[RMDB]
RNA sequence: GGGAACGACUCGAGUAGAGUCGAAAAUUGAAGGUAAAACAGCCUGUGGGUGAAACACACCCACAGGGCCCAUUGGGCGCUAGCACUCUGGUAUAACGGUACCUUUGUGCGCCUGUUUUACCGAAGGGAGGAGGUCUGUUCGCAGACCUCAAAAGAAACAACAACAACAAC
Reactivity to DMS in 0.01 (KOAc 150mM, MgCl2 10mM, bicine 150mM(pH8.5), 24C), signal-to-noise 5, nucleotides 027 to 129: u010u010g040a130a100g050g000u020a000a030a010a020c020a000g000c000c000u030g040u010g000g000g000u090g010a110a130a200c260a150c040a020c000c050c010a020c000a040g070g010g000c020c020c030a040u070u000g010g010g000c010g000c020u080a060g070c040a030c000u020c010u030g000g040u070a050u050a170a170c300g000g000u030a020c000c030u030u010u010g010u030g020c020g010c040c000u050g020u020u010u040u000a020c010c000g000a050a010g010g010g020a100g040
Reactivity to 2A3 in 0.01 (KOAc 150mM, MgCl2 10mM, bicine 150mM(pH8.5), 24C), signal-to-noise 5, nucleotides 027 to 129: u180u160g050a060a040g000g000u000a000a020a000a000c000a000g000c020c000u000g000u000g000g000g000u010g060a050a080a010c120a020c000a010c060c010c000a010c010a000g000g000g000c000c000c000a040u280u300g000g000g010c020g000c050u080a050g000c010a000c010u020c010u000g000g020u010a050u040a260a210c250g170g030u020a010c000c000u000u000u000g000u000g000c010g000c000c000u000g000u010u000u000u000a000c000c000g000a010a020g040g020g010a050g010
Background
The record gives the reactivity of an RNA of 170 nucleotides to DMS and 2A3. Reactivities are given for positions 27 through 129. The 2A3 profile rests on 11,594 reads. Reactivities are rounded to 0.1 and cut off at 0 and 3. Conditions: 150 mM KOAc, 10 mM MgCl2 and 150 mM bicine (pH 8.5), 24 C. DMS adducts were read by reverse transcription with MarathonRT.